Source: RMDB library OK2TRN, as collected in RNAgym. Structure probing data (DMS) for a 177-nucleotide construct. Values are in units of 0.01, from 0 to 300, in steps of 10. The RNA was probed in 150 mM KOAc, 10 mM MgCl2 and 150 mM bicine (pH 8.5) at 24 C.

RNA sequence: GGGAACGACUCGAGUAGAGUCGAAAAAAAUACAAAUAGUUGGAGAUUUAUAAUUGCAGUGUGCUUUCCUAUGAAUCAACUAGUUGCUAAAUACCUGUUAAGUCCAUAUUGCACCUCCAUGAUUGGAGAACCCGUUAUGAUUCGUCAUAACGGGUUCAAAAGAAACAACAACAACAAC
Reactivity to DMS in 0.01 (KOAc 150mM, MgCl2 10mM, bicine 150mM(pH8.5), 24C), signal-to-noise 1, nucleotides 027 to 126: a030a190a030u010a080c030a050a040a060u000a070g000u010u000g010g000a110g000a170u020u010u010a040u020a040a000u010u010g000c020a100g000u000g030u000g000c000u010u000u000c030c070u010a050u020g000a020a080u010c070a000a030c030u000a030g010u000u000g010c100u000a050a020a100u010a100c040c020u010g030u010u010a090a050g010u010c050c010a030u000a040u000u000g010c100a110c130c010u000c070c020a040u000g000a150u010u000g020g040a290